[RMDB]
RNA sequence: GGGAACGACUCGAGUAGAGUCGAAAAAGCCUCCAGCGUGUACGCACGCUGGAGGCACCAACAGUGAUGACCACAACAUGCCAUCUGAGUUGCUUUGCUGAAAUCCAGAGGCUGUUUCUGAGCUGAACAUGUGAGCACCGUUCGCGGUGCUCACAUGAAAAGAAACAACAACAACAAC
Reactivity to 2A3 in 0.01 (KOAc 150mM, MgCl2 10mM, bicine 150mM(pH8.5), 24C), signal-to-noise 2, nucleotides 027 to 126: a000g050c000c010u000c000c000a000g000c140g070u020g000u060a040c180g010c180a000c000g000c000u010g000g000a000g010g000c000a000c000c030a020a080c010a000g020u010g090a010u030g040a100c030c000a080c110a040a010c040a090u180g000c010c010a300u130c090u000g110a150g140u140u070g070c010u110u100u150g080c170u120g130a270a060a030u000c000c000a000g000a010g000g000c000u000g050u000u000u050c020u070g000a000g000c000u040g070a130a020

Structure probing data (2A3) for a 177-nucleotide construct. The RNA was probed in 150 mM KOAc, 10 mM MgCl2 and 150 mM bicine (pH 8.5) at 24 C. Reactivities are given for positions 27 through 126. Source: RMDB library RFM100, as collected in RNAgym. 2A3 adducts were read by reverse transcription with SuperScript II with manganese.